[RMDB]
RNA sequence: GGGAACGACUCGAGUAGAGUCGAAAAGUACCGUCGGCCAUGCACGAUCCGUACAGUACCGGCCUGAUCUAUAUGAUCGUACCUGGCCAUGAUCGACACAUGUCAUGGCCGCGCCACGAGAUCGUACCCACUUGCUUCCAUUCGUGGAAGCAAGUGGAAAAGAAACAACAACAACAAC
Reactivity to DMS in 0.01 (KOAc 150mM, MgCl2 10mM, bicine 150mM(pH8.5), 24C), signal-to-noise 2, nucleotides 027 to 126: g000u000a100c230c050g000u020c020g060g000c040c020a040u000g030c020a120c000g000a020u000c070c160g000u000a060c130a040g000u010a030c110c090g000g010c040c010u030g010a010u010c030u000a140u020a120u010g000a020u000c000g000u000a040c090c100u010g040g030c010c020a080u020g000a030u000c040g000a140c220a090c180a150u010g000u010c010a000u000g000g000c000c030g000c070g000c070c060a060c000g000a060g000a080u000c030g010u000a060c050
Reactivity to 2A3 in 0.01 (KOAc 150mM, MgCl2 10mM, bicine 150mM(pH8.5), 24C), signal-to-noise 2, nucleotides 027 to 126: g030u050a080c030c070g070u090c060g070g000c000c000a040u050g010c040a020c030g000a010u000c030c030g040u060a110c040a090g060u050a080c030c030g000g000c020c030u010g020a010u010c020u060a260u050a110u300g030a010u010c000g020u050a080c000c090u100g000g010c000c040a040u060g000a000u030c030g100a060c040a020c030a230u270g010u130c000a000u000g040g000c030c000g020c000g000c010c020a070c000g040a050g030a160u030c000g000u060a020c010
The data come from the RNA Mapping Database (RMDB), library OK2TRN. The record gives the reactivity of an RNA of 177 nucleotides to DMS and 2A3. For DMS, 1,295 sequencing reads were counted. Conditions: 150 mM KOAc, 10 mM MgCl2 and 150 mM bicine (pH 8.5), 24 C. High 2A3 reactivity points to a flexible backbone, as in loops and unpaired stretches.